An RNA of 177 nucleotides, treated with 2A3 and DMS and read out base by base. It was measured as part of the RMDB library TTRDEL. DMS adducts were read by reverse transcription with MarathonRT. The RNA was probed in 150 mM KOAc, 10 mM MgCl2 and 150 mM bicine (pH 8.5) at 24 C. For 2A3 the reverse transcriptase was SuperScript II with manganese. Values cover nucleotides 27 to 126.
RNA sequence: GGGAACGACUCGAGUAGAGUCGAAAAGAUAUGGACCCAUCGAUCAUUCGAGUAGGUUAUCGGAAACGAUGAACCGCAGAUACGAAUGGGAGGGUCCUAAGUCAAAAGAAAGGCUUCGGCCUUUCAAGCAUUGAAUAUACUUCGGUAUAUUCAAUGCAAAAGAAACAACAACAACAAC
Reactivity to 2A3 in 0.01 (KOAc 150mM, MgCl2 10mM, bicine 150mM(pH8.5), 24C), signal-to-noise 4, nucleotides 027 to 126: g020a030u090a060u160g000g000a000c020c020c030a210u300c050g060a080u080c000a000u000u000c000g020a020g030u100a100g040g010u010u010a010u010c010g020g050a080a040a040c010g010a020u120g290a030a030c010c010g010c120a020g010a080u080a060c020g000a010a000u010g020g020g000a050g000g000g000u000c010c000u000a060a020g020u000c030a050a080a030a110g020a010a000a000g020g000c040u100u170c300g190g000c040c000u010u000u010c010a000a020
Reactivity to DMS in 0.01 (KOAc 150mM, MgCl2 10mM, bicine 150mM(pH8.5), 24C), signal-to-noise 6, nucleotides 027 to 126: g010a040u010a300u010g000g010a020c010c000c010a210u010c160g010a090u010c010a010u010u000c000g010a100g020u000a030g030g020u000u000a030u000c000g000g000a100a060a170c000g000a010u000g000a010a010c000c000g010c120a150g000a090u000a050c020g000a030a000u000g000g000g010a050g020g000g010u000c000c000u000a000a050g010u000c030a070a080a110a140g000a020a010a000g010g010c000u000u000c230g030g000c000c000u000u000u000c000a100a150